[RMDB]
RNA sequence: GGGAACGACUCGAGUAGAGUCGAAAAUAACAUCGUAGUGUAAGACGAAAAGUCAACGUCGCUUGCCAGCAGGUCCACCAAAGGAAUACGCUUCGGUAACUACUCGAGAUCCCAAGCGAUAACACAACCUUCCAUGAAGGUUCGCCUUCAUGGAAGGAAAAGAAACAACAACAACAAC
Reactivity to 2A3 in 0.01 (KOAc 150mM, MgCl2 10mM, bicine 150mM(pH8.5), 24C), signal-to-noise 2, nucleotides 027 to 126: u090a010a020c010a040u100c010g050u040a130g040u040g030u120a070a040g000a020c020g050a130a100a070a050g080u050c080a030a080c040g010u000c030g010c070u020u010g050c010c010a050g050c010a010g030g030u000c010c000a000c080c070a020a090a110g050g000a090a050u050a040c050g020c070u000u040c020g010g030u000a140a110c000u020a000c000u020c010g000a000g000a030u010c000c010c020a010a000g040c030g130a090u100a200a010c060a000c010a050a080
Reactivity to DMS in 0.01 (KOAc 150mM, MgCl2 10mM, bicine 150mM(pH8.5), 24C), signal-to-noise 1, nucleotides 027 to 126: u010a110a040c070a040u000c090g000u000a050g000u000g000u000a090a120g030a020c020g010a070a050a100a100g000u000c110a000a100c080g010u000c050g030c010u000u000g000c060c010a090g020c090a110g000g000u030c030c000a060c080c120a000a100a120g060g000a080a100u000a110c100g000c040u000u000c040g000g040u000a110a120c040u000a000c000u000c000g010a070g050a090u000c000c000c020a060a040g020c060g020a010u000a030a050c130a060c290a060a050
Description: The data come from the RNA Mapping Database (RMDB), library M2PK90. Chemical mapping of a 177-nucleotide RNA with 2A3 and DMS. DMS adducts were read by reverse transcription with MarathonRT. The reactions ran in a buffer of 150 mM KOAc, 10 mM MgCl2 and 150 mM bicine (pH 8.5), at 24 C. High 2A3 reactivity points to a flexible backbone, as in loops and unpaired stretches.